[RMDB]
RNA sequence: GGGAACGACUCGAGUAGAGUCGAAAAGAAAGAAAAGAAAAUCAUCAAAUGAGGUCAAACGUCAGAAUUUCGGGCGUAAAUACGACAUUAUGCAGAAAGCCGGCCUCACUGUCGUUUAGAAAGAAAAGCUACCUCAUUAUUUCGAUAAUGAGGUAGCAAAAGAAACAACAACAACAAC
Reactivity to 2A3 in 0.01 (KOAc 150mM, MgCl2 10mM, bicine 150mM(pH8.5), 24C), signal-to-noise 4, nucleotides 027 to 126: g050a020a070a010g100a030a120a020a000g190a060a110a040a080u120c090a020u030c050a070a070a110u140g000a020g000g020u000c050a060a030a000c050g040u000c030a030g050a120a100u100u230u150c040g010g040g000c020g000u000a020a110a040u160a010c010g000a000c010a010u060u060a080u200g070c040a020g110a120a060a000g070c060c050g000g000c010c000u020c020a040c060u030g060u050c000g000u030u030u040a070g040a070a100a020g120a010a060a010a000
Reactivity to DMS in 0.01 (KOAc 150mM, MgCl2 10mM, bicine 150mM(pH8.5), 24C), signal-to-noise 3, nucleotides 027 to 126: g010a080a120a050g000a020a050a030a080g010a110a080a100a080u010c130a030u010c060a050a150a130u000g000a030g030g020u030c030a040a120a070c020g010u020c020a030g000a130a160u020u020u000c020g000g000g000c000g000u020a020a100a080u020a050c130g020a040c140a040u040u020a050u010g000c080a130g000a120a060a080g000c110c060g000g020c020c000u010c010a020c110u010g000u000c000g010u000u000u010a060g000a050a130a040g000a050a030a020a040